An RNA of 177 nucleotides, treated with DMS and 2A3 and read out base by base. It was measured as part of the RMDB libraries RFM100 and RFMREP. DMS adducts were read by reverse transcription with MarathonRT. The reactions ran in a buffer of 150 mM KOAc, 10 mM MgCl2 and 150 mM bicine (pH 8.5), at 24 C.
RNA sequence: GGGAACGACUCGAGUAGAGUCGAAAAUCGAUUGAGGUAGUUUCGACGCGAACAAGGUCAGGCGGGAGGGCAACGUUUAAAAUCACCGGCUGCCAGGCGUCGCGCUCCGCCAGUUUUCGGGAAUAACAAACCUAAAGCAAUUCGUUGCUUUAGGUUUAAAAGAAACAACAACAACAAC
Reactivity to DMS in 0.01 (KOAc 150mM, MgCl2 10mM, bicine 150mM(pH8.5), 24C), signal-to-noise 8, nucleotides 027 to 126: u020c050g000a120u010u010g000a140g000g010u010a050g010u000u010u010c010g010a070c020g010c030g000a060a050c100a120a120g010g010u030c030a030g010g010c010g000g010g010a130g000g010g010c170a060a060c140g000u020u020u030a050a040a090a080u020c080a110c020c010g000g020c020u000g000c030c020a040g000g020c130g000u000c020g010c300g000c020u000c020c010g010c100c060a080g010u010u000u020u020c060g000g000g000a090a050u020a040a080c190
Reactivity to 2A3 in 0.01 (KOAc 150mM, MgCl2 10mM, bicine 150mM(pH8.5), 24C), signal-to-noise 4, nucleotides 027 to 126: u080c010g020a030u010u160g070a040g010g050u130a030g040u020u010u140c030g010a040c010g020c020g030a080a060c050a090a130g080g020u210c040a020g040g080c020g010g020g030a100g010g130g000c020a080a020c070g020u050u140u190a100a070a010a010u060c030a020c090c000g080g000c000u010g010c000c010a030g040g000c020g010u020c010g000c010g020c010u020c010c020g050c020c020a030g000u020u000u020u110c030g010g040g080a060a150u110a110a030c080